[RMDB]
Structure probing data (DMS) for a 177-nucleotide construct. Source: RMDB library 15KREP, as collected in RNAgym. Reactivities are given for positions 27 through 126. DMS adducts were read by reverse transcription with MarathonRT. The DMS profile rests on 6,021 reads.
RNA sequence: GGGAACGACUCGAGUAGAGUCGAAAAGUUGAUGGAAAACCCAUUAGUGCCUACGCAUUUUUAAUGGCCAAGGAUGGAAUAACCAAACUGGCUGAUGUUGAAGCGGACGUCGCAGCACGUGCUGAUGCAAGUAAGAGACGUUCGCGUCUCUUACUUGAAAAGAAACAACAACAACAAC
Reactivity to DMS in 0.01 (KOAc 150mM, MgCl2 10mM, bicine 150mM(pH8.5), 24C), signal-to-noise 6, nucleotides 027 to 126: g020u010u010g000a070u000g010g010a080a080a120a190c220c010c030a050u000u000a050g020u010g010c010c020u000a120c160g010c060a040u010u000u010u000u020a070a110u000g010g020c020c010a040a060g020g010a200u000g000g000a210a120u010a110a130c010c010a020a040a180c030u000g000g000c020u000g010a050u010g000u000u000g000a060a090g010c030g000g000a090c080g010u000c060g010c070a060g020c070a080c150g000u010g010c030u000g010a080u010g000